[RMDB]
This 177-nucleotide RNA was probed chemically with 2A3 and DMS.
RNA sequence: GGGAACGACUCGAGUAGAGUCGAAAAUGGAGACGCUGACCGAGGCUUGCAAAUCAAAGUUGCAGUUGAUAAUAGCCGUCCUGUCAUCGGACAGAACGUUACUUUUACUUAUACGUUGACUAACACCGGUACAUCUUAACUUCGGUUAAGAUGUACCAAAAGAAACAACAACAACAAC
Reactivity to 2A3 in 0.01 (KOAc 150mM, MgCl2 10mM, bicine 150mM(pH8.5), 24C), signal-to-noise 4, nucleotides 027 to 126: u090g030g010a050g000a020c030g000c050u020g020a010c000c030g020a060g030g000c030u060u070g000c030a040a080a090u140c030a090a110a120g050u100u050g020c030a020g020u050u050g040a050u050a170a040u050a040g020c020c020g000u050c000c010u000g010u030c030a150u150c080g100g020a000c010a000g040a050a010c010g000u050u070a050c080u080u060u080u060a070c050u120u050a070u020a130c040g030u020u010g060a050c040u050a090a020c030a020c140c040
Reactivity to DMS in 0.01 (KOAc 150mM, MgCl2 10mM, bicine 150mM(pH8.5), 24C), signal-to-noise 6, nucleotides 027 to 126: u020g010g000a190g000a060c050g030c040u010g010a070c070c060g000a090g000g010c040u000u000g020c070a050a070a090u020c130a050a100a070g000u000u010g020c050a050g010u010u000g010a090u010a030a050u010a060g010c110c020g000u000c030c000u010g030u000c010a170u010c200g030g020a060c030a020g020a020a030c020g020u000u010a110c070u000u000u000u000a060c120u010u010a120u010a050c090g010u010u000g010a120c080u010a060a090c160a110c160c100
2A3 adducts were read by reverse transcription with SuperScript II with manganese. Values cover nucleotides 27 to 126. The DMS profile rests on 4,912 reads. It was measured as part of the RMDB library OK2TST.